[RMDB]
RNA sequence: GGGAACGACUCGAGUAGAGUCGAAAAAGGUGCAGAAGGUUGCGAACGAGGGGACUGUCAAGCUUUUCGGCAAGUGGGAAGCUGAGGGGUGAGUGGUGCUUUCCAUUUCAUGGAGAAGAAUACGAUUGGCAGAAGGGGAGCAGAGUUUGAGACGAUGCUUCCUCAACUAUUUCGAUAGUUGAGGAAGAAAAGAAACAACAACAACAAC
Reactivity to DMS in 0.01 (KOAc 150mM, MgCl2 10mM, bicine 150mM(pH8.5), 24C), signal-to-noise 2, nucleotides 027 to 156: a000g020g000u000g040c050a120g010a070a080g010g050u000u000g040c080g020a080a090c040g040a090g020g000g040g000a100c060u010g010u000c040a130a140g030c020u000u010u010u010c060g060g030c060a080a110g030u020g000g020g020a040a040g030c030u020g010a060g000g030g020g040u030g000a040g010u000g000g060u010g010c030u000u000u000c010c000a070u000u000u000c050a160u010g030g000a060g050a040a040g030a080a060u000a060c110g030a160u000u020g020g010c070a090g010a110a050g020g000g000g000a060g040c020a100g010a120g000u010u000u000g000a070g010a170c070g000a190u000g000
Reactivity to 2A3 in 0.01 (KOAc 150mM, MgCl2 10mM, bicine 150mM(pH8.5), 24C), signal-to-noise 5, nucleotides 027 to 156: a000g060g010u040g020c030a020g020a160a030g070g020u100u100g030c050g040a070a030c020g000a050g000g020g010g010a010c020u040g020u080c010a030a080g040c040u100u080u020u090c030g020g030c040a030a060g060u100g040g020g010a020a020g010c040u030g020a040g000g010g050g010u040g030a040g010u060g010g020u050g010c030u030u050u000c020c010a040u080u100u130c100a090u130g030g010a070g000a080a010g040a030a010u130a070c090g060a080u030u050g000g010c020a010g010a070a000g020g010g010g010a010g000c030a010g010a010g050u030u090u110g050a040g000a010c040g030a020u090g020